Overview
An RNA of 207 nucleotides, treated with DMS and 2A3 and read out base by base. The RNA was probed in 150 mM KOAc, 10 mM MgCl2 and 150 mM bicine (pH 8.5) at 24 C. 2A3 adducts were read by reverse transcription with SuperScript II with manganese.
[RMDB]
RNA sequence: GGGAACGACUCGAGUAGAGUCGAAAACGAAGGAAAGCUUGACCAGAUAAUCUUCUGCAACGCCAUUACGAGGACUGCCCUUAGAGGCUCAUGGCGAUAGGUCACCCCGCCGGUCGGUCAGCUGCUUAUACCCGUGCACGGUUCGCCGUGCACGGAAACUAUUUAGUCGUUUCGACGACUAAAUAGUAAAAGAAACAACAACAACAAC
Reactivity to DMS in 0.01 (KOAc 150mM, MgCl2 10mM, bicine 150mM(pH8.5), 24C), signal-to-noise 2, nucleotides 027 to 156: c060g000a190a040g010g020a130a100a090g010c020u020u010g020a070c030c000a170g010a130u000a060a120u000c060u000u000c030u020g010c030a140a130c010g010c020c010a080u000u010a100c060g020a140g030g000a110c110u010g000c030c010c010u000u010a120g010a180g020g020c000u000c030a010u000g000g020c000g010a070u000a050g000g040u020c050a140c020c010c000c020g020c010c020g000g000u000c050g010g010u010c020a110g000c010u000g010c010u000u010a170u000a090c110c000c000g030u000g000c000a000c000g010g000u000u000c300g030c030c010g020u000g000c000a000c000g000g000a010a020
Reactivity to 2A3 in 0.01 (KOAc 150mM, MgCl2 10mM, bicine 150mM(pH8.5), 24C), signal-to-noise 3, nucleotides 027 to 156: c010g040a040a030g070g090a220a040a000g050c030u100u100g040a050c010c020a040g010a080u090a100a080u080c120u130u040c050u120g040c090a090a070c020g010c000c010a040u080u130a070c050g030a030g040g080a080c060u060g010c020c010c010u050u120a120g040a150g080g000c000u020c010a040u050g020g000c030g030a040u060a040g000g020u040c050a090c020c010c000c000g020c020c010g020g050u070c010g020g030u020c000a010g010c050u030g030c000u090u070a070u050a120c030c000c010g000u000g000c000a000c000g010g020u070u070c160g020c070c000g000u000g000c000a000c000g000g010a000a000